Structure probing data (DMS) for a 177-nucleotide construct. For DMS the reverse transcriptase was MarathonRT.
RNA sequence: GGGAACGACUCGAGUAGAGUCGAAAAGAUAUGGAACGAAAGGGUAUCUAUCACAAGAGCGCAGAUAUACGUGUCGGAAACGACACCGUAUGUAGCUUGUGAUAGAUACCCUUUCGUUCCUAAGUCAGAAUGUUACGUAGUUCGCUACGUAACAUUCAAAAGAAACAACAACAACAAC
Reactivity to DMS in 0.01 (KOAc 150mM, MgCl2 10mM, bicine 150mM(pH8.5), 24C), signal-to-noise 4, nucleotides 027 to 126: g000a050u020a300u020g000g010a010a000c000g000a010a010a020g040g000g010u000a010u000c000u000a010u000c010a010c000a000a020g010a170g020c170g020c180a120g000a070u010a110u000a000c030g020u000g030u010c000g000g020a120a080a230c010g000a010c000a010c100c200g020u000a020u000g000u000a140g010c000u000u000g000u000g000a010u000a000g000a020u000a000c000c000c000u000u000u000c000g030u000u000c000c010u000a000a050g010u000c090a150